[RMDB]
RNA sequence: GGGAACGACUCGAGUAGAGUCGAAAAAUAUAGACCUACAAGGUAAACAUUUUUGCUUAGGAGUGUUUUACAUGCCAAUCACUUUUGGCAAAAUUUGGUUAGAAACUACACAUUAUAAAACCUUGUUGGAAAUACAUUAAGGCAGUCAAAUGCAAAGCAUGAGAAGGGGAUUCGUCCCCUUCUCAUGAAAAGAAACAACAACAACAAC
Reactivity to 2A3 in 0.01 (KOAc 150mM, MgCl2 10mM, bicine 150mM(pH8.5), 24C), signal-to-noise 1, nucleotides 027 to 156: a000u220a000u050a030g080a010c000c000u000a000c000a000a000g000g030u060a140a190a000c020a030u000u000u020u020u080g020c000u050u100a060g020g000a070g020u040g030u020u080u030u060a090c060a070u170g030c000c020a010a000u070c020a020c040u010u010u060u000g000g000c000a020a000a050a050u050u060u060g040g000u040u040a100g040a050a030a020c020u180a020c060a020c020a070u180u120a090u240a110a110a000a020c000c020u020u000g010u000u050g000g060a000a050a050u170a040c070a040u090u140a070a000g080g010c000a000g050u170c030a070a060a040u170g030c180a000a250a030g000
Reactivity to DMS in 0.01 (KOAc 150mM, MgCl2 10mM, bicine 150mM(pH8.5), 24C), signal-to-noise 1, nucleotides 027 to 156: a080u020a110u000a100g030a300c000c020u000a090c020a020a020g050g040u000a150a090a100c030a010u000u000u030u010u000g010c040u000u020a060g000g040a070g010u000g000u000u000u030u000a090c050a140u010g020c140c060a060a070u020c050a040c020u020u000u000u000g000g000c030a000a010a010a080u000u000u010g000g010u010u000a070g020a210a080a110c020u010a050c050a120c030a220u000u000a130u000a070a040a140a060c050c000u000u000g010u020u000g010g000a060a080a170u000a020c040a020u000u000a050a070g000g000c040a050g020u020c060a020a030a080u000g000c000a050a090a190g000
Structure probing data (2A3 and DMS) for a 207-nucleotide construct.
In probing experiments dimethyl sulfate is read out at A N1 and C N3, which are open when not base-paired.
For DMS the reverse transcriptase was MarathonRT.
For 2A3, 726 sequencing reads were counted.
The DMS profile rests on 2,055 reads.